An RNA of 177 nucleotides, treated with 2A3 and DMS and read out base by base. It was measured as part of the RMDB library OK2TST. The reactions ran in a buffer of 150 mM KOAc, 10 mM MgCl2 and 150 mM bicine (pH 8.5), at 24 C. The DMS profile rests on 1,263 reads. 2A3 adducts were read by reverse transcription with SuperScript II with manganese.

RNA sequence: GGGAACGACUCGAGUAGAGUCGAAAAGAGGCGGUCAAUGCCCAUACCGCAGCCUGCCGUUGGUGGCAUGCCCUGUUCCAUAGCUGCGAGGAAGUCCUCAUCCAAGACCAUGGCCUCAUCGUCGCCAGCAAGAACGUAUCUUCGGAUACGUUCUUGCAAAAGAAACAACAACAACAAC
Reactivity to 2A3 in 0.01 (KOAc 150mM, MgCl2 10mM, bicine 150mM(pH8.5), 24C), signal-to-noise 2, nucleotides 027 to 126: g100a030g050g030c010g100g020u120c110a050a100u120g040c040c020c000a000u050a060c020c000g000c000a010g030c000c050u040g020c040c020g140u070u110g060g050u140g040g000c020a010u080g000c000c000c000u040g020u020u090c040c030a000u050a050g000c020u050g030c020g030a040g030g050a100a000g070u060c000c010u030c030a060u000c010c030a050a010g010a070c000c020a060u080g070g070c000c040u090c080a120u080c000g130u030c050g070c070c020a000
Reactivity to DMS in 0.01 (KOAc 150mM, MgCl2 10mM, bicine 150mM(pH8.5), 24C), signal-to-noise 2, nucleotides 027 to 126: g010a120g010g010c060g030g020u000c280a120a090u010g050c020c030c010a070u000a130c070c020g010c030a090g010c060c100u010g010c000c010g020u000u000g080g000u010g010g010c040a040u000g000c020c060c020u000g010u000u000c020c010a140u000a090g030c030u000g000c060g000a130g000g020a100a060g010u000c040c030u000c040a150u030c040c060a090a090g000a090c060c080a110u000g010g000c040c030u010c050a040u000c110g000u020c050g020c030c060a120